[RMDB]
RNA sequence: GGGAACGACUCGAGUAGAGUCGAAAAUAGCUUGAUACUAAGAAAAACGCCGUAUGUGUCUGGGACGCGAUUCGGCUACCUUUAUGGUAUUGAUGACAAUUUUAUCUUAGUUUAGUAAAACUAAGCAUUUCUUAAUGACCUUAGAAAUGACCAAGGCCCUACGCUAGGGGUUCGCCCCUAGCGUAGGAAAAGAAACAACAACAACAAC
Reactivity to 2A3 in 0.01 (KOAc 150mM, MgCl2 10mM, bicine 150mM(pH8.5), 24C), signal-to-noise 1, nucleotides 027 to 156: u120a010g010c020u010u080g020a020u070a060c030u040a050a170g050a010a010a000a000a000c020g010c000c000g050u040a090u300g090u010g040u060c110u230g030g170g000a020c000g000c020g030a020u030u010c050g000g000c000u030a060c000c030u010u030u070a140u230g000g020u020a000u010u100g120a100u120g000a030c030a100a200u000u000u000u000a000u030c000u000u000a000g000u010u010u000a040g020u130a030a000a030a000c000u000a000a000g000c000a000u000u000u000c000u000u030a030a030u110g130a040c010c020u000u000a000g010a000a000a000u010g000a000c000c090a180a000g000g000c010
Structure probing data (2A3) for a 207-nucleotide construct. 2A3 adducts were read by reverse transcription with SuperScript II with manganese. As a SHAPE reagent, 2A3 marks flexible, mostly unpaired nucleotides at the ribose 2'-OH. For 2A3, 588 sequencing reads were counted.